Structure probing data (DMS and 2A3) for a 207-nucleotide construct.
RNA sequence: GGGAACGACUCGAGUAGAGUCGAAAACGACAACGGUUCCCUUCGGCCUGUGUCCGAUUGGAAGGAGCUUGCCACUGCAUUCAUCAAUCCGCAUGAAGUUGCUUGGGAGUUAACUCCCUACAGCUUCGUUGUUGAUUGGUUCUUGAAUGUUGGUGACGACAUGGUAAGAGUUCGCUCUUACCAUGUCAAAAGAAACAACAACAACAAC
Reactivity to DMS in 0.01 (KOAc 150mM, MgCl2 10mM, bicine 150mM(pH8.5), 24C), signal-to-noise 2, nucleotides 027 to 156: c040g010a090c060a040a090c030g000g030u000u000c000c000c030u010u000c010g000g000c050c050u000g040u000g000u000c010c000g000a070u000u000g010g000a110a080g010g000a110g030c030u000u010g040c030c010a080c020u000g010c010a020u000u010c010a030u000c010a020a020u000c000c110g050c050a040u000g010a020a030g030u000u000g020c010u000u070g000g040g010a030g030u010u010a140a200c030u000c000c000c020u000a000c000a010g020c000u000u000c000g030u000u000g030u030u010g020a080u000u000g030g000u000u030c070u020u010g000a020a020u000g000u000u040g080g010u000g010a070c010
Reactivity to 2A3 in 0.01 (KOAc 150mM, MgCl2 10mM, bicine 150mM(pH8.5), 24C), signal-to-noise 7, nucleotides 027 to 156: c070g110a030c080a100a030c100g040g010u020u030c020c010c000u010u030c050g020g000c060c060u250g020u090g070u120c010c010g050a060u060u140g040g030a100a070g040g020a030g020c050u080u090g020c040c000a010c020u020g000c000a010u000u010c000a020u020c000a000a010u000c000c010g000c010a010u020g000a000a000g000u000u010g060c210u080u050g030g010g010a000g010u160u240a290a260c010u010c000c000c000u000a000c000a000g000c000u000u000c000g020u010u030g000u010u010g000a010u000u010g010g030u080u080c050u050u090g020a030a010u020g010u110u240g040g010u030g030a040c080
The reactions ran in a buffer of 150 mM KOAc, 10 mM MgCl2 and 150 mM bicine (pH 8.5), at 24 C. DMS adducts were read by reverse transcription with MarathonRT. Source: RMDB library PDB130, as collected in RNAgym. The 2A3 profile rests on 7,536 reads. Values cover nucleotides 27 to 156.